[RMDB]
RNA sequence: GGGAACGACUCGAGUAGAGUCGAAAAGGUUUAUCUCUGUUUUGGAGCCGAUCUUUUUGCCAUAUCUACUAACAAAAAAGGUCGUUAUUUCGUAGGUUGCGCUUUUUUGUGUCAUCAAAAAAGCAAAGAUAAGACUGCUUGCCUGCAAAAGAUUUUGCAUAUCUUAAGGCUUCGGCCUUAAGAUAUGAAAAGAAACAACAACAACAAC
Reactivity to 2A3 in 0.01 (KOAc 150mM, MgCl2 10mM, bicine 150mM(pH8.5), 24C), signal-to-noise 4, nucleotides 027 to 156: g050g010u040u120u050a210u050c020u000c030u020g200u280u200u160u300g040g000a010g000c010c000g010a000u020c000u000u030u010u000u020g040c070c030a070u040a110u100c010u020a020c010u040a090a130c070a080a100a030a040a010a010g020g000u010c020g020u030u030a090u060u130u130c040g000u010a010g010g020u020u020g000c010g000c050u000u000u010u000u000u000g060u040g150u110c070a130u080c040a080a010a000a000a000a000g000c000a010a010a000g020a020u130a060a040g050a050c060u080g020c020u140u170g030c010c000u000g000c000a000a010a080a130g100a120u080u080u130u170g050
Reactivity to DMS in 0.01 (KOAc 150mM, MgCl2 10mM, bicine 150mM(pH8.5), 24C), signal-to-noise 2, nucleotides 027 to 156: g020g000u000u000u000a020u000c000u010c040u000g010u000u010u000u010g030g010a010g080c220c130g040a000u000c000u000u000u000u000u000g000c050c050a160u000a120u000c050u000a050c020u000a270a260c090a000a060a050a060a110a120g010g040u000c000g020u000u000a060u000u000u020c070g040u000a080g010g020u000u000g000c070g020c020u000u010u000u010u010u000g010u000g030u000c160a140u010c010a000a030a060a010a020a000g030c000a020a030a160g040a170u000a060a120g000a100c080u000g010c070u000u000g020c030c060u000g000c050a040a070a090a100g010a160u000u000u000u000g000

An RNA of 207 nucleotides, treated with 2A3 and DMS and read out base by base. In probing experiments dimethyl sulfate is read out at A N1 and C N3, which are open when not base-paired. The DMS profile rests on 2,860 reads. For 2A3 the reverse transcriptase was SuperScript II with manganese. The RNA was probed in 150 mM KOAc, 10 mM MgCl2 and 150 mM bicine (pH 8.5) at 24 C. Reactivities are given for positions 27 through 156.